[RMDB]
RNA sequence: GGGAACGACUCGAGUAGAGUCGAAAACGUUGUCAUCGACAACACCCUAUGCAUUCAUGCUCUGUAAGGAUGCGCCGAAAGCUGAGCAAGCCCGAGUUGCCCAGACCUGAAAUGCAACACUUUAGAGAAAACCCGAAGCAGUUCGCUGCUUCGGGAAGUCUUAUGUGAUCUUCGGAUCACAUAAGACAAAAGAAACAACAACAACAAC
Reactivity to 2A3 in 0.01 (KOAc 150mM, MgCl2 10mM, bicine 150mM(pH8.5), 24C), signal-to-noise 2, nucleotides 027 to 156: c050g000u000u000g030u020c060a180u170c300g010a000c000a010a000c010a080c000c000c000u070a130u090g000c010a010u020u030c030a020u090g000c090u000c010u030g070u110a060a040g100g010a090u060g040c000g030c020c000g100a130a080a010g050c020u090g010a020g080c120a050a000g020c030c000c040g080a090g040u090u170g040c040c000c000a010g020a030c010c000u030g000a090a040a030u040g000c010a020a100c040a050c110u130u170u180a100g020a020g030a050a120a010a010c000c000c000g010a010a000g010c000a000g030u060u150c270g060c150u010g000c020u000u000c010g000g000g020a000a000
An RNA of 207 nucleotides, treated with 2A3 and read out base by base. The 2A3 profile rests on 917 reads.